Chemical mapping of a 177-nucleotide RNA with DMS and 2A3. Reactivities are given for positions 27 through 126. For DMS, 19,152 sequencing reads were counted. The reactions ran in a buffer of 150 mM KOAc, 10 mM MgCl2 and 150 mM bicine (pH 8.5), at 24 C. High DMS reactivity at an A or C suggests that its Watson-Crick edge is free. It was measured as part of the RMDB library OK1LIB.
RNA sequence: GGGAACGACUCGAGUAGAGUCGAAAACGGUCCACAGCAGGUGGCCGAUCUGGUGUGCGAUGGUCCAACCCGGCGCAGGUGUCGGAUCGGCCCAGCGAUCCGCUGGCAGAUGCGCCACCAGCGCGUCCAUGAGAAGGGGAUUCGUCCCCUUCUCAUGAAAAGAAACAACAACAACAAC
Reactivity to DMS in 0.01 (KOAc 150mM, MgCl2 10mM, bicine 150mM(pH8.5), 24C), signal-to-noise 5, nucleotides 027 to 126: c060g010g030u010c000c010a020c040a050g010c050a040g000g010u010g010g030c080c100g000a080u020c020u000g010g010u010g020u010g020c170g010a040u010g000g000u000c040c070a120a140c010c010c000g010g010c010g000c000a060g010g010u000g000u000c000g000g000a010u000c000g000g000c180c020c020a010g010c020g000a170u040c190c070g030c020u000g000g010c020a160g010a030u010g010c010g000c040c010a020c000c000a060g010c040g010c010g010u030c060
Reactivity to 2A3 in 0.01 (KOAc 150mM, MgCl2 10mM, bicine 150mM(pH8.5), 24C), signal-to-noise 4, nucleotides 027 to 126: c030g020g030u050c010c000a030c010a030g180c020a030g070g080u080g100g220c080c040g010a030u010c020u090g100g040u020g050u030g040c110g030a050u070g090g020u030c030c010a030a030c040c010c000g020g000c000g000c010a030g000g010u020g000u030c000g010g060a000u000c000g000g000c070c010c000a000g000c000g060a250u150c130c150g000c010u000g010g000c000a020g010a010u070g140c000g000c010c000a000c000c000a030g000c010g000c010g100u040c060